[RMDB]
Structure probing data (DMS) for a 177-nucleotide construct. Values cover nucleotides 27 to 126. It was measured as part of the RMDB library M2PK50. The reactions ran in a buffer of 150 mM KOAc, 10 mM MgCl2 and 150 mM bicine (pH 8.5), at 24 C.
RNA sequence: GGGAACGACUCGAGUAGAGUCGAAAAUCAAUCUAGUUCGCUAGAUUGAAAAGGGCGAUGAGGCCCGCCCAAACUGCCGUGAAAAGGGCUGAUGGCCUCAAAAAAUCCGUCGGUUCGCCGACGGAAAGCUUAAGCAAUUGUUCGCAAUUGCUUAAGCAAAAGAAACAACAACAACAAC
Reactivity to DMS in 0.01 (KOAc 150mM, MgCl2 10mM, bicine 150mM(pH8.5), 24C), signal-to-noise 2, nucleotides 027 to 126: u000c010a030a010u010c010u000a000g010u010u000c210g050c000u000a020g000a020u000u000g010a010a080a100a090g000g000g020c000g000a130u000g010a050g000g020c010c010c020g000c000c010c020a040a110a120c040u010g000c000c040g020u020g000a060a090a140a190g000g000g010c010u010g000a100u010g010g010c000c000u010c000a000a020a080a090a060a070u000c010c010g010u010c000g000g010u000u000c210g010c010c000g030a010c000g010g000a010a010a030